The data come from the RNA Mapping Database (RMDB), library OK2TST. Chemical mapping of a 177-nucleotide RNA with DMS and 2A3. Conditions: 150 mM KOAc, 10 mM MgCl2 and 150 mM bicine (pH 8.5), 24 C. For 2A3, 730 sequencing reads were counted. DMS adducts were read by reverse transcription with MarathonRT.

[RMDB]
RNA sequence: GGGAACGACUCGAGUAGAGUCGAAAAAAUGUCCCCGCCCAUUUCGGCUGGGCAACGUGAAGGAAUGGAGAAUAUGCUGCGCGCCCUGAUGCCUUGGCGCAAAGGCCCCUUCUCGCUAUAUGGGUUACGAGGAGGCAGUAUUCGUACUGCCUCCUCGAAAAGAAACAACAACAACAAC
Reactivity to DMS in 0.01 (KOAc 150mM, MgCl2 10mM, bicine 150mM(pH8.5), 24C), signal-to-noise 1, nucleotides 027 to 126: a060a080u010g000u040c060c000c040c230g040c010c000c050a040u000u000u000c130g080g010c080u050g020g000g010c060a060a040c020g030u000g010a020a080g010g000a100a060u000g020g010a090g000a080a060u020a090u000g010c030u000g010c300g040c020g000c000c000c040u010g030a090u000g000c100c030u000u010g010g010c040g010c000a010a100a120g000g060c020c130c020c020u010u000c000u010c010g000c020u000a070u030a040u010g000g000g010u020u000a120
Reactivity to 2A3 in 0.01 (KOAc 150mM, MgCl2 10mM, bicine 150mM(pH8.5), 24C), signal-to-noise 1, nucleotides 027 to 126: a050a020u140g090u030c020c000c010c030g040c000c000c040a090u110u120u120c020g020g000c010u080g060g010g000c000a030a040c030g020u050g050a100a000g050g000a050a100u150g060g030a040g050a080a090u270a100u230g020c010u030g000c040g000c000g030c020c010c000u060g050a070u190g000c010c030u030u060g040g030c020g010c030a020a020a020g000g000c010c040c020c000u050u050c000u030c030g020c050u130a050u060a050u290g100g040g090u100u180a040